[RMDB]
RNA sequence: GGGAACGACUCGAGUAGAGUCGAAAAUGGUGUUAAGUGGAAUAAGUGGAAAAAUAUACAUAUAUGUACAGGGGGCUACAUAUAUGUAUAUGCCCCCUCGACCGAGUAUAAGUAGGUAUAAGGUGGAGGUAUAUAUUAUCUUCGGAUAAUAUAUACCAAAAGAAACAACAACAACAAC
Reactivity to DMS in 0.01 (KOAc 150mM, MgCl2 10mM, bicine 150mM(pH8.5), 24C), signal-to-noise 4, nucleotides 027 to 126: u010g000g010u010g000u000u010a060a160g020u010g000g020a100a060u010a060a080g010u010g010g000a040a050a070a100a050u010a020u000a020c000a020u010a020u010a020u000g000u010a010c100a080g000g000g000g000g010c210u000a010c020a000u000a010u000a020u020g010u000a010u000a000u000g010c050c010c000c000c010u000c010g010a010c060c030g000a250g000u010a030u020a040a120g030u030a050g010g020u010a020u010a060a150g000g010u010g000g000a160
Reactivity to 2A3 in 0.01 (KOAc 150mM, MgCl2 10mM, bicine 150mM(pH8.5), 24C), signal-to-noise 3, nucleotides 027 to 126: u080g040g030u070g030u120u060a090a090g070u080g090g060a090a080u060a170a060g020u170g050g050a060a060a000a100a020u040a000u010a030c010a000u020a000u010a000u020g030u020a020c090a080g000g000g030g080g000c010u020a010c000a000u040a000u010a000u010g030u000a010u010a000u020g000c000c000c000c010c000u010c010g020a030c020c020g020a010g070u070a050u030a190a040g080u070a010g000g070u090a110u030a100a020g070g000u040g040g090a050